[RMDB]
RNA sequence: GGGAACGACUCGAGUAGAGUCGAAAAAAGAACACUUUUAGCUCCGUGCGGCGGCUGGACAGAGCCACCAAUCAGCUGGACGCGCAGACCGCCCUGCCAGGGCGAGGUUGCGUCCGGAGGCGCCGGUGGAGGGCGGCCGGCUAGUCGCUGAGCCGCAACCGUACUGAUUAUUCGUAAUCAGUACGGUAAAAGAAACAACAACAACAAC
Reactivity to 2A3 in 0.01 (KOAc 150mM, MgCl2 10mM, bicine 150mM(pH8.5), 24C), signal-to-noise 2, nucleotides 027 to 156: a000a000g210a080a070c120a030c050u100u110u040u080a020g010c020u060c060c090g130u070g060c010g010g000c000g020g060c030u040g000g050a060c060a130g110a080g080c000c020a010c030c020a020a050u130c040a010g030c010u020g000g000a000c000g000c000g000c010a010g020a060c000c000g000c010c000c000u200g230c100c080a060g040g030g000c010g050a160g000g010u020u100g000c000g000u000c000c000g020g010a050g000g000c070g030c050c080g080g000u000g000g020a060g040g110g020c000g000g000c000c030g010g000c010u060a100g130u110c070g000c020u020g000a030g030c000c010g020c040a020